This 177-nucleotide RNA was probed chemically with 2A3 and DMS. The 2A3 profile rests on 30,697 reads. It was measured as part of the RMDB library OK2TST. The RNA was probed in 150 mM KOAc, 10 mM MgCl2 and 150 mM bicine (pH 8.5) at 24 C. Values are in units of 0.01, from 0 to 300, in steps of 10.
RNA sequence: GGGAACGACUCGAGUAGAGUCGAAAACCUAUAGCGCUCGCCCGCGCAGCGGGUCGGCGGGCAGUUCGACGUCAGCGGAGGUGUCGAUGACGAUCGGGUUCACACCUCGCCAGCGGCGCGCUUAGGAGUCGUAAUAUAAUUUCGAUUAUAUUACGACAAAAGAAACAACAACAACAAC
Reactivity to 2A3 in 0.01 (KOAc 150mM, MgCl2 10mM, bicine 150mM(pH8.5), 24C), signal-to-noise 9, nucleotides 027 to 126: c010c000u040a070u100a100g020c020g010c010u030c090g010c010c020c010g060c050g040c120a020g060c040g070g060g050u070c040g020g020c010g000g010g000c040a020g030u070u110c040g080a100c000g070u020c030a020g000c020g040g040a060g050g060u080g040u120c070g030a040u070g060a050c060g060a170u100c070g090g040g010u160u120c050a030c000a000c030c000u020c010g040c040c010a020g010c010g020g000c020g000c000g010c010u030u060a050g020g050a070
Reactivity to DMS in 0.01 (KOAc 150mM, MgCl2 10mM, bicine 150mM(pH8.5), 24C), signal-to-noise 9, nucleotides 027 to 126: c000c000u000a100u010a090g010c020g020c010u000c200g010c030c010c030g020c030g020c190a110g030c030g010g000g010u000c160g010g010c010g010g000g010c120a060g000u000u000c030g010a080c010g010u000c020a160g000c010g000g020a060g010g000u010g010u000c050g010a030u000g010a090c170g000a120u000c070g010g000g010u000u010c170a080c050a050c040c000u000c010g000c080c030a160g010c020g000g010c040g000c010g010c030u000u000a060g010g010a210
Reactivities are given for positions 27 through 126.